[RMDB]
RNA sequence: GGGAACGACUCGAGUAGAGUCGAAAAACGACCUGGUUACGACCAGGUCGAAACUGGCAAGGAUGAUACACACUUGCCCUCACUUAGACUAUAGUUCACUGAUGAGAGCAUUGUUCUGAGCCAGUAAAGCUUCGUCCCCAUUCGUGGGGACGAAGCUAAAAGAAACAACAACAACAAC
Reactivity to 2A3 in 0.01 (KOAc 150mM, MgCl2 10mM, bicine 150mM(pH8.5), 24C), signal-to-noise 2, nucleotides 027 to 126: a000c000g000a000c000c020u010g030g030u050u040a080c290g000a010c050c010a000g010g000u000c000g000a000a000a000c010u000g000g020c020a010a160g090g000a010u130g010a010u300a060c040a000c000a010c010u000u000g010c090c000c000u030c000a000c000u000u040a010g010a010c020u070a130u020a300g120u210u110c000a000c050u200g190a300u010g000a160g000a000g000c000a030u000u070g000u010u000c000u000g070a070g000c010c000a000g020u110a050a050